Chemical mapping of a 177-nucleotide RNA with 2A3 and DMS. For 2A3, 2,755 sequencing reads were counted.
[RMDB]
RNA sequence: GGGAACGACUCGAGUAGAGUCGAAAAGCCGUGCUCGAGAGGGAGCAGAAAAUGCAGAGCUAUCCCGUCGUUUCGCUAAACAAAUGCGAAACGACAAAUUGCGUUACAUACGCAAUCCUCAAAUGAAUGGAUUAACACUUUUCGAAGUGUUAAUCCAAAAAGAAACAACAACAACAAC
Reactivity to 2A3 in 0.01 (KOAc 150mM, MgCl2 10mM, bicine 150mM(pH8.5), 24C), signal-to-noise 3, nucleotides 027 to 126: g000c000c020g080u050g000c020u000c020g170a130g010a000g120g110g030a000g010c020a000g110a040a190a010a020u210g030c050a010g010a040g070c010u030a030u000c000c010c020g000u000c010g000u000u000u000c000g000c000u030a160a170a200c040a060a100a010u130g000c000g010a010a020a020c000g000a000c000a000a040a000u030u000g000c000g000u020u130a160c090a140u250a020c010g000c000a000a000u060c000c000u090c030a040a050a050u200g120a100a070
Reactivity to DMS in 0.01 (KOAc 150mM, MgCl2 10mM, bicine 150mM(pH8.5), 24C), signal-to-noise 4, nucleotides 027 to 126: g020c040c050g020u010g000c010u000c030g020a140g030a090g010g000g020a080g000c000a080g000a060a090a070a080u000g020c090a080g010a070g000c050u000a110u000c000c010c010g040u000c000g020u000u000u000c000g020c000u010a070a040a140c300a080a060a070u000g010c010g000a000a000a010c010g010a000c010a020a040a020u000u000g010c000g040u000u010a160c240a090u010a010c000g010c010a010a020u000c020c020u000c040a100a120a130u000g000a100a140